[RMDB]
RNA sequence: GGGAACGACUCGAGUAGAGUCGAAAAUGUUCAUCAUUUUGCGUGCAAUGAUCUGAACCAUUUUGAUUCCCUGCACCGUUAUUUCGUUGUGGCAUAAUCAAAUUAAGCCAUUGAUUUUAUGUUUGUGACACUCAAAAGAAUUCGUUCUUUUGAGUGUAAAAGAAACAACAACAACAAC
Reactivity to 2A3 in 0.01 (KOAc 150mM, MgCl2 10mM, bicine 150mM(pH8.5), 24C), signal-to-noise 6, nucleotides 027 to 126: u060g010u010u010c010a050u020c010a010u050u040u060u250g070c070g060u110g020c040a010a030u010g010a020u030c060u150g010a010a010c050c020a050u020u010u010u120g150a090u020u010c000c000c000u010g040c070a070c010c030g090u080u100a100u050u140u100c080g030u050u180g020u030g010g010c020a030u060a060a020u090c070a070a040a080u070u120a060a070g040c030c020a010u000u100g050a030u020u060u050u140a130u110g060u010u080u080g070u020g000
Reactivity to DMS in 0.01 (KOAc 150mM, MgCl2 10mM, bicine 150mM(pH8.5), 24C), signal-to-noise 9, nucleotides 027 to 126: u000g010u000u000c020a050u000c010a010u000u010u010u010g010c090g020u000g010c140a060a010u000g000a030u010c210u010g010a020a020c120c130a050u000u000u000u000g010a200u000u000c000c010c000u010g000c070a050c120c060g010u010u000a050u010u010u010c140g020u000u010g020u000g010g010c020a060u010a020a040u000c100a040a030a240u000u000a070a090g010c100c100a040u000u000g000a030u000u000u010u010a040u010g010u000u000u010g010u010g010
The record gives the reactivity of an RNA of 177 nucleotides to 2A3 and DMS. Reactivities are given for positions 27 through 126. The RNA was probed in 150 mM KOAc, 10 mM MgCl2 and 150 mM bicine (pH 8.5) at 24 C.